RNA sequence: GGGAACGACUCGAGUAGAGUCGAAAAUCAGAAUCAGGCCGGAGUGUUUAGCGCUCCGUAAACACGGUCGUACAUCCACCCGGUAGCCUGGUUCCUUGCAUUGAGUGAUGUACGGAGUUUAUAGAGCAAAAGAAAGACCUGUUCGCAGGUCUUUCAAGGACUAAACUCAGUUCGCUGAGUUUAGUCCAAAAGAAACAACAACAACAAC
Reactivity to 2A3 in 0.01 (KOAc 150mM, MgCl2 10mM, bicine 150mM(pH8.5), 24C), signal-to-noise 1, nucleotides 027 to 156: u070c000a000g050a010a020u000c000a000g000g000c000c000g010g030a070g030u050g060u110u240u120a050g080c040g000c020u000c020c000g000u000a040a000a000c170a020c090g050g040u030c010g000u000a000c000a020u010c030c020a030c040c010c000g000g050u040a020g010c000c000u000g000g000u000u000c000c010u090u060g050c020a080u180u180g040a070g050u100g080a000u000g000u020a030c060g040g000a120g000u180u300u030a150u130a070g050a000g110c110a090a110a160a040g020a020a000a000g000a000c000c000u060g040u120u010c050g040c130a000g000g000u000c000u000u000u000c000a000a010